Description
Structure probing data (DMS) for a 177-nucleotide construct. The reactions ran in a buffer of 150 mM KOAc, 10 mM MgCl2 and 150 mM bicine (pH 8.5), at 24 C.
RNA sequence: GGGAACGACUCGAGUAGAGUCGAAAAGAUAUGGACCUGCCAAGGCACAGGCAGCUGCAACUAUUAGUUCGGAAACGAACUAACGAAUUGCAGAACUACUGCGCUGUGCCUUGGCAGGUCCUAAGUCGAAAUAACCUAUCUUCGGAUAGGUUAUUUCAAAAGAAACAACAACAACAAC
Reactivity to DMS in 0.01 (KOAc 150mM, MgCl2 10mM, bicine 150mM(pH8.5), 24C), signal-to-noise 2, nucleotides 027 to 126: g010a080u010a300u000g010g010a010c000c000u010g000c010c000a020a030g010g000c010a000c010a010g000g000c000a000g010c000u010g000c000a020a020c080u000a300u000u010a000g010u010u010c000g020g000a120a120a300c020g000a010a010c010u000a010a010c100g010a040a090u000u000g000c010a010g000a080a030c090u020a300c010u000g000c010g010c000u000g010u000g000c000c000u010u020g010g010c000a000g000g000u000c010c000u000a010a090g020u000c130